Conditions: 150 mM KOAc, 10 mM MgCl2 and 150 mM bicine (pH 8.5), 24 C. The record gives the reactivity of an RNA of 177 nucleotides to 2A3 and DMS.
RNA sequence: GGGAACGACUCGAGUAGAGUCGAAAACUUAGUGAGUUCGCUCACUAAGGGACUCUGGUACCCAGGCUGGAGAGGGACCAAGUAGGAGGCUGGGCACCACCAACAUUCAGCGCUUCGGCGCUGAAAAUGUCUUAGUAGAUUUCGAUCUACUAAGACAAAAAGAAACAACAACAACAAC
Reactivity to 2A3 in 0.01 (KOAc 150mM, MgCl2 10mM, bicine 150mM(pH8.5), 24C), signal-to-noise 4, nucleotides 027 to 126: c000u000u000a000g000u010g010a010g010u030u110c170g090c110u000c010a000c000u000a000a010g000g000g010a040c020u010c070u130g030g010u030a050c000c000c020a040g140g000c040u060g020g070a120g030a090g150g090g020a050c010c050a070a040g080u070a070g080g160a030g040g040c020u010g010g000g000c010a010c010c000a010c010c030a050a110c000a070u030u040c000a010g010c000g000c020u030u090c250g120g000c010g000c000u000g000a000a000a000a020
Reactivity to DMS in 0.01 (KOAc 150mM, MgCl2 10mM, bicine 150mM(pH8.5), 24C), signal-to-noise 4, nucleotides 027 to 126: c010u000u010a000g010u000g010a000g020u000u010c250g030c000u010c000a000c000u000a000a000g000g000g000a160c060u000c050u010g010g020u000a060c000c010c010a060g010g010c030u000g020g000a100g000a100g000g010g020a130c080c050a060a120g010u000a070g020g000a070g000g010c020u000g000g000g010c030a040c010c010a080c120c070a050a070c140a130u010u000c000a010g010c010g000c000u000u000c210g020g000c020g020c000u000g000a000a010a090a090
Annotation: For 2A3, 6,126 sequencing reads were counted. The DMS profile rests on 4,082 reads. For 2A3 the reverse transcriptase was SuperScript II with manganese. It was measured as part of the RMDB library M2PK50.